[RMDB]
RNA sequence: GGGAACGACUCGAGUAGAGUCGAAAAGGAUACUGCUGCGCAACCUGGAGUGUAGCGACGUGCAGCGCAACAUCAAGCCCCAGAUCCUGUCCGCCUUUGGGGACAUGGCGCUCGCCAUCGGCGACCGUCCCGUUAAAGCAUUCGUGCUUUAACGGGAAAAAGAAACAACAACAACAAC
Reactivity to DMS in 0.01 (KOAc 150mM, MgCl2 10mM, bicine 150mM(pH8.5), 24C), signal-to-noise 3, nucleotides 027 to 126: g010g000a080u010a100c170u000g020c010u010g000c020g020c030a100a150c140c040u010g000g010a120g020u000g000u000a050g020c040g030a120c170g000u000g020c040a050g010c020g000c090a040a070c100a030u010c120a080a180g000c040c010c010c030a060g020a060u000c040c020u000g020u010c090c030g000c020c030u000u000u010g020g010g000g020a040c050a040u020g030g010c170g020c150u000c030g010c020c010a020u000c040g010g030c000g010a070c060c080g000
Reactivity to 2A3 in 0.01 (KOAc 150mM, MgCl2 10mM, bicine 150mM(pH8.5), 24C), signal-to-noise 2, nucleotides 027 to 126: g050g000a030u100a140c050u130g030c020u020g030c030g000c030a050a060c020c030u080g130g110a190g070u200g050u180a050g050c060g010a050c030g020u070g000c000a010g010c020g020c060a020a090c010a120u120c090a110a030g020c000c000c000c000a030g020a080u030c000c010u030g050u060c080c030g050c010c060u000u040u100g040g000g030g010a010c010a030u140g140g000c050g010c060u000c040g080c020c010a090u070c080g010g000c000g000a010c000c040g090